[RMDB]
RNA sequence: GGGAACGACUCGAGUAGAGUCGAAAAGUGUGAAGUGAGUGAGCCACUUACGAGCACGAAUUACAUGGCUCUAUUGACAUUACUGGGCGCCAGGAGCCCUACCUGGACAAGUCUCGAAGAUCGGGCCGAGAUUGAGAGACGACUAUUACCGGCCACACCUAUAGCAGUCAUUCGUGACUGCUAUAGGAAAAGAAACAACAACAACAAC
Reactivity to 2A3 in 0.01 (KOAc 150mM, MgCl2 10mM, bicine 150mM(pH8.5), 24C), signal-to-noise 2, nucleotides 027 to 156: g030u000g000u020g110a060a020g010u000g020a000g020u050g010a060g070c060c030a040c030u030u040a020c040g010a000g010c040a010c040g060a040a030u190u110a100c090a190u100g010g000c000u000c010u050a070u040u270g090a020c050a120u050u200a150c100u150g030g030g000c050g010c010c000a020g000g000a080g050c030c000c040u000a020c010c010u030g000g030a040c020a040a070g010u000c000u010c000g020a080a040g020a030u020c070g000g050g000c020c010g090a090g000a030u070u130g020a030g010a010g000a070c020g000a000c000u080a060u160u140a120c080c010g010g000c000c010a030c000a000
Reactivity to DMS in 0.01 (KOAc 150mM, MgCl2 10mM, bicine 150mM(pH8.5), 24C), signal-to-noise 2, nucleotides 027 to 156: g020u000g060u030g020a170a300g020u000g010a040g030u000g000a170g000c060c050a160c030u000u010a030c000g050a300g040c010a100c040g050a120a080u000u000a160c160a160u010g020g020c000u000c070u020a120u000u010g010a070c020a110u000u000a140c050u010g000g050g040c030g010c050c020a050g020g030a120g010c060c030c020u000a010c060c000u000g000g020a110c030a130a210g020u000c000u010c060g040a120a130g000a020u000c060g040g020g000c150c070g010a060g040a030u000u000g010a300g010a090g000a130c040g000a060c140u000a050u000u000a130c060c050g070g020c000c000a060c060a100